[RMDB]
RNA sequence: GGGAACGACUCGAGUAGAGUCGAAAACGCUAUAGAUUCGUCUAUAGCGACUCGUACCCGCCGGCCGGUGCGCGCGGUAGGUGACGCAAACCACCGUGCGAAAUGUACUGGUUUUCGAACCAGUAAAUAUGCCUGUAGAUUUCGAUCUACAGGCAUAAAAAGAAACAACAACAACAAC
Reactivity to DMS in 0.01 (KOAc 150mM, MgCl2 10mM, bicine 150mM(pH8.5), 24C), signal-to-noise 2, nucleotides 027 to 126: c030g010c000u000a000u000a000g010a020u000u030c230g020u000c000u000a000u000a010g010c000g000a010c060u000c090g020u000a140c020c020c000g020c140c090g020g010c050c070g020g000u010g020c050g030c020g030c020g000g000u000a070g040g000u000g020a070c220g010c270a100a100a050c010c020a050c010c000g010u010g000c010g020a050a070a050u010g000u010a010c010u000g000g000u000u000u000u020c120g010a000a020c000c000a000g000u010a010a060a140
Reactivity to 2A3 in 0.01 (KOAc 150mM, MgCl2 10mM, bicine 150mM(pH8.5), 24C), signal-to-noise 1, nucleotides 027 to 126: c000g020c010u010a010u000a010g020a020u070u010c150g020u000c150u000a000u000a000g000c000g000a010c010u020c040g030u020a070c020c010c010g000c040c020g030g070c030c040g060g040u100g070c020g000c010g000c000g000g000u070a230g070g050u030g040a050c100g000c200a060a080a030c020c000a020c010c010g010u030g010c010g010a100a000a000u110g040u040a020c000u030g000g000u000u000u030u070c140g030a000a000c000c000a000g000u000a000a000a040
The record gives the reactivity of an RNA of 177 nucleotides to DMS and 2A3. Conditions: 150 mM KOAc, 10 mM MgCl2 and 150 mM bicine (pH 8.5), 24 C. 2A3 adducts were read by reverse transcription with SuperScript II with manganese. It was measured as part of the RMDB library M2PK50. DMS adducts were read by reverse transcription with MarathonRT.